Chemical mapping of a 177-nucleotide RNA with DMS and 2A3.
RNA sequence: GGGAACGACUCGAGUAGAGUCGAAAAGAUAUGGAACCGAGUAUGGAGCUGAUCGGAAACGAUUCAGCUAUGAAGUACCGGUUCCUAAGUCAAAAGCUUUCCCUUGGGUUCGCCCAAGGGAAAGCAACAGAUACAUUCCGUUCGCGGAAUGUAUCUGAAAAGAAACAACAACAACAAC
Reactivity to DMS in 0.01 (KOAc 150mM, MgCl2 10mM, bicine 150mM(pH8.5), 24C), signal-to-noise 3, nucleotides 027 to 126: g000a020u010a210u000g000g000a010a000c000c000g010a120g020u000a010u000g010g040a020g030c010u000g010a040u000c000g020g000a070a040a100c010g010a020u000u010c010a010g030c010u000a060u010g000a130a160g010u000a000c000c000g000g010u000u000c000c000u000a010a030g000u000c010a100a100a170a160g000c000u000u000u000c000c000c000u000u000g000g000g010u000u030c260g000c010c000c000a010a020g020g000g000a000a000a000g000c010a030a050
Reactivity to 2A3 in 0.01 (KOAc 150mM, MgCl2 10mM, bicine 150mM(pH8.5), 24C), signal-to-noise 2, nucleotides 027 to 126: g010a010u050a010u100g000g000a000a010c000c000g030a090g050u010a030u050g150g040a000g000c020u010g000a010u000c030g010g030a080a050a020c010g010a000u300u300c020a000g000c000u010a160u070g050a070a050g020u010a000c010c000g000g000u000u000c000c000u000a000a000g010u000c020a030a030a080a090g000c000u010u000u000c030c010c000u030u000g080g010g000u090u070c280g080c050c000c000a010a000g000g000g000a000a000a000g000c000a000a000
Reactivities are given for positions 27 through 126.
For 2A3, 5,646 sequencing reads were counted.